[RMDB]
The data come from the RNA Mapping Database (RMDB), library OK2TST. Chemical mapping of a 177-nucleotide RNA with 2A3 and DMS. DMS adducts were read by reverse transcription with MarathonRT.
RNA sequence: GGGAACGACUCGAGUAGAGUCGAAAAGUUUACCCGGGCCGUCCGCGGUGACCACCGCGCUGGUGAUGUCCGGUCUGCCGGCGGAGAAGUUCUGCUUCGAGGGUUUCGCCCCGCGCAAGGGUGCGGCGACUUUUCUCUAGUUCGCUAGAGAAAAGUCAAAAGAAACAACAACAACAAC
Reactivity to 2A3 in 0.01 (KOAc 150mM, MgCl2 10mM, bicine 150mM(pH8.5), 24C), signal-to-noise 2, nucleotides 027 to 126: g020u050u080u200a150c000c000c000g000g090g000c000c000g000u000c010c010g010c020g010g030u050g090a110c050c040a020c020c010g010c030g010c130u100g000g030u050g050a120u090g060u000c010c010g020g000u000c010u060g040c010c000g020g110c080g030g030a060g010a050a010g030u090u050c060u130g040c030u100u090c080g030a100g030g030g000u020u050u060c050g030c010c000c000c010g040c020g000c040a070a110g150g030g000u110g020c000g020g010c030
Reactivity to DMS in 0.01 (KOAc 150mM, MgCl2 10mM, bicine 150mM(pH8.5), 24C), signal-to-noise 4, nucleotides 027 to 126: g020u010u000u000a090c080c010c010g010g020g020c020c030g010u000c040c020g020c030g010g000u000g000a110c240c160a130c000c010g020c060g000c070u000g010g010u010g010a130u010g010u000c030c020g020g000u010c040u000g020c030c020g010g010c080g010g000a080g000a060a070g010u000u000c070u000g010c070u000u010c070g000a090g010g010g010u000u000u010c020g000c030c000c000c010g010c170g010c100a110a090g010g010g030u010g020c030g010g000c160